[RMDB]
Chemical mapping of a 177-nucleotide RNA with DMS. Values cover nucleotides 27 to 126. It was measured as part of the RMDB library OK2TST. The RNA was probed in 150 mM KOAc, 10 mM MgCl2 and 150 mM bicine (pH 8.5) at 24 C. For DMS the reverse transcriptase was MarathonRT.
RNA sequence: GGGAACGACUCGAGUAGAGUCGAAAACUAAGUGCAAGCAACCCAAUCAACCCUAAGACUCUAAAAGAGUUCUCCGAGGUUGACCCUGAGAAGGCUGCGCGAGGAAUCAAACUGGCUGGGUUCACCGCAUUCCCUACGCUUUCGAGCGUAGGGAAUGAAAAGAAACAACAACAACAAC
Reactivity to DMS in 0.01 (KOAc 150mM, MgCl2 10mM, bicine 150mM(pH8.5), 24C), signal-to-noise 1, nucleotides 027 to 126: c060u010a050a170g010u010g010c010a040a060g030c070a160a220c000c010c030a060a170u000c030a010a040c000c000c020u010a050a060g010a040c000u010c000u060a080a100a140a220g010a070g010u000u010c010u010c040c050g010a170g010g020u010u000g030a080c040c040c080u000g000a150g010a060a070g010g000c060u000g050c100g010c020g020a220g000g030a090a130u010c090a080a050a120c140u000g010g010c000u000g000g000g010u000u000c030a080c070c020g000